[RMDB]
RNA sequence: GGGAACGACUCGAGUAGAGUCGAAAACUUCAUCUAUAGCGGUACACAAGUUCCGCCACCGGCAGACGCAUCGCCGGGCGGCAACUUCUACGGUGGCGGCAAUGCCGAAAUUCUCAACUUGGACGAACGAAUCAGUCACUUUCGAGUGACUGAUUCGAAAAGAAACAACAACAACAAC
Reactivity to DMS in 0.01 (KOAc 150mM, MgCl2 10mM, bicine 150mM(pH8.5), 24C), signal-to-noise 1, nucleotides 027 to 126: c090u000u040c030a090u000c060u020a110u030a060g000c040g000g000u000a050c190a090c020a060a100g010u010u000c000c000g010c010c000a010c020c000g050g040c180a020g020a020c250g010c170a030u010c160g010c010c040g040g020g030c170g020g000c030a110a070c090u000u000c010u010a040c030g000g020u010g000g010c050g000g000c070a050a040u000g010c010c010g010a050a080a120u010u010c020u010c020a070a060c180u000u000g020g050a090c100g010a050a140
Reactivity to 2A3 in 0.01 (KOAc 150mM, MgCl2 10mM, bicine 150mM(pH8.5), 24C), signal-to-noise 2, nucleotides 027 to 126: c030u100u070c020a080u080c080u160a160u150a090g100c000g000g010u090a060c070a070c030a240a050g010u160u000c000c020g060c000c010a020c000c020g020g060c070a020g010a060c050g030c030a090u050c110g000c040c040g040g090g020c050g040g030c000a010a030c000u060u000c020u010a010c010g000g060u020g030g000c010g030g000c020a010a000u030g050c020c010g050a180a050a050u170u080c110u020c040a030a210c020u090u100g040g060a040c040g030a160a050
An RNA of 177 nucleotides, treated with DMS and 2A3 and read out base by base. The data come from the RNA Mapping Database (RMDB), library OK2TRN. The 2A3 profile rests on 1,109 reads. The RNA was probed in 150 mM KOAc, 10 mM MgCl2 and 150 mM bicine (pH 8.5) at 24 C. For DMS the reverse transcriptase was MarathonRT.